[RMDB]
RNA sequence: GGGAACGACUCGAGUAGAGUCGAAAAUGACGGUUAGAUGUCCGCACAACUCCGGACUCGCGGUGAGCGAUACAGCGCAGCGCGAGCAUCGCAGCUGCUGUGCGGACGGCUAGCAAGGGCUAGCCAGCCCUGCUACCUCAUUCGUGAGGUAGCAGGGAAAAGAAACAACAACAACAAC
Reactivity to DMS in 0.01 (KOAc 150mM, MgCl2 10mM, bicine 150mM(pH8.5), 24C), signal-to-noise 2, nucleotides 027 to 126: u020g000a190c200g000g000u000u010a000g030a090u060g010u010c010c000g100c000a000c000a000a060c020u000c220c010g010g000a150c010u000c000g040c000g030g000u000g020a120g050c020g050a190u040a200c210a150g000c030g010c000a050g040c000g030c010g000a030g000c070a020u000c020g000c070a130g000c120u070g000c110u030g000u000g000c020g020g000a000c000g010g000c050u000a040g000c000a190a140g020g010g030c000u000a000g030c070c080a120g000
Reactivity to 2A3 in 0.01 (KOAc 150mM, MgCl2 10mM, bicine 150mM(pH8.5), 24C), signal-to-noise 4, nucleotides 027 to 126: u200g070a010c080g070g020u090u100a070g000a140u080g010u000c000c000g000c000a010c000a070a190c010u050c060c010g000g000a030c000u000c010g010c010g120g180u050g020a060g000c020g070a150u130a280c100a100g020c000g000c020a060g070c010g000c000g000a010g010c050a160u110c000g040c040a030g000c050u280g010c010u000g010u010g000c020g000g000a010c010g000g000c020u000a000g010c040a150a240g190g080g020c010u000a000g010c000c030a000g020